[RMDB]
RNA sequence: GGGAACGACUCGAGUAGAGUCGAAAAGAUAUGGAUGUCUGUUCGCUGAUGACCAUGGGAAGUCUGAGAUAAUAUCGGAAACGAUAUUAUCUCAGUCACCCAUGCAAGGCGAACGACAUCCUAAGUCGACGACUAAUCAGUUCGCUGAUUAGUCGUCAAAAGAAACAACAACAACAAC
Reactivity to DMS in 0.01 (KOAc 150mM, MgCl2 10mM, bicine 150mM(pH8.5), 24C), signal-to-noise 2, nucleotides 027 to 126: g010a040u000a300u010g000g000a000u000g000u000c000u010g050u000u000c000g060c000u000g000a050u010g010a210c300c000a000u000g020g000g010a220a090g030u000c040u010g000a010g000a010u010a000a000u000a000u000c000g010g010a190a080a210c000g000a020u000a000u000u000a000u000c000u000c010a010g000u000c050a290c000c000c000a000u000g000c000a040a070g000g000c000g030a000a000c030g000a000c000a000u030c010c000u010a020a080g000u000c040
Reactivity to 2A3 in 0.01 (KOAc 150mM, MgCl2 10mM, bicine 150mM(pH8.5), 24C), signal-to-noise 2, nucleotides 027 to 126: g090a070u130a100u300g020g010a000u020g000u080c300u290g030u020u010c000g050c030u040g100a300u160g040a070c040c020a000u000g020g000g020a190a270g070u000c000u000g000a000g000a030u010a010a000u000a000u000c000g010g000a050a080a020c020g010a000u000a000u010u000a000u020c000u010c000a010g010u000c000a010c000c030c000a020u020g010c010a060a130g010g010c000g010a000a000c000g000a000c010a000u000c010c010u000a080a000g050u050c080